[RMDB]
RNA sequence: GGGAACGACUCGAGUAGAGUCGAAAAGAGGGUCGCCCAGGAAUGGCGGGACCCACUCGACUGGGGUCCGCGUUCCAUCCUUUCUUACCUUGUGGCCGGCAUGGUCCCAGCCUCCUCGCUGGCGCCGCUAGGUUUUAUGGUUCGCCAUAAAACCUAGAAAAGAAACAACAACAACAAC
Reactivity to DMS in 0.01 (KOAc 150mM, MgCl2 10mM, bicine 150mM(pH8.5), 24C), signal-to-noise 2, nucleotides 027 to 126: g000a080g000g000g020u010c120g000c010c010c070a150g010g010a020a020u000g020g040c020g010g030g000a030c010c000c000a010c020u010c230g010a100c200u020g010g000g000g010u000c010c020g020c020g000u000u000c010c000a100u010c030c020u010u000u000c040u000u010a150c110c040u000u020g010u020g020g010c040c030g000g010c050a090u010g010g020u000c120c000c010a090g000c050c040u010c060c060u010c080g010c030u000g010g000c100g020c040c060g000
Reactivity to 2A3 in 0.01 (KOAc 150mM, MgCl2 10mM, bicine 150mM(pH8.5), 24C), signal-to-noise 2, nucleotides 027 to 126: g060a040g000g040g040u130c100g060c020c020c030a020g040g050a020a050u100g300g080c030g040g010g020a010c000c050c010a020c020u140c050g160a140c080u020g010g000g030g010u000c010c010g010c000g000u000u010c010c000a030u030c010c000u030u200u040c020u050u050a100c000c010u080u100g020u100g080g030c020c040g020g020c030a060u110g050g010u090c070c000c010a010g000c000c000u040c020c010u020c030g000c000u010g000g060c050g020c000c000g020
Structure probing data (DMS and 2A3) for a 177-nucleotide construct. Source: RMDB library 15KREP, as collected in RNAgym. 2A3 adducts were read by reverse transcription with SuperScript II with manganese. DMS adducts were read by reverse transcription with MarathonRT. Conditions: 150 mM KOAc, 10 mM MgCl2 and 150 mM bicine (pH 8.5), 24 C.